[RMDB]
The record gives the reactivity of an RNA of 177 nucleotides to DMS and 2A3. The reactions ran in a buffer of 150 mM KOAc, 10 mM MgCl2 and 150 mM bicine (pH 8.5), at 24 C.
RNA sequence: GGGAACGACUCGAGUAGAGUCGAAAAACGGCGGAGCUCGGCGUCGGUGAGUCGCUUCGGUCGGCCGGGGCGGCGCGAUUCGGGUUCGACCACGUGGUCGUCGACCAGCUGACGCGCCGAACGUGCAUAGGGAUCAGUUAUUCGUAACUGAUCCCUAAAAAGAAACAACAACAACAAC
Reactivity to DMS in 0.01 (KOAc 150mM, MgCl2 10mM, bicine 150mM(pH8.5), 24C), signal-to-noise 3, nucleotides 027 to 126: a070c060g010g020c010g010g010a130g020c030u010c050g010g010c020g010u000c030g000g000u000g000a120g020u000c010g010c020u000u010c060g010g020u000c180g000g000c030c030g010g000g000g030c030g020g010c030g000c050g000a150u000u010c030g010g010g010u000u000c020g000a030c000c020a210c300g020u030g000g010u000c040g000u010c070g000a070c010c020a210g000c040u020g000a050c050g010c040g000c010c000g000a030a040c060g010u000g000c130a160
Reactivity to 2A3 in 0.01 (KOAc 150mM, MgCl2 10mM, bicine 150mM(pH8.5), 24C), signal-to-noise 1, nucleotides 027 to 126: a010c010g030g000c000g050g010a050g070c050u040c060g040g010c000g010u050c000g020g040u070g030a070g030u020c010g000c000u040u030c040g070g070u080c100g090g160c020c020g000g000g000g050c000g010g020c050g000c030g030a020u040u080c030g000g070g030u090u110c000g010a020c010c010a070c140g150u270g040g020u040c010g040u050c020g000a030c030c010a030g020c030u020g010a010c010g010c000g030c000c000g020a040a010c010g020u140g030c020a100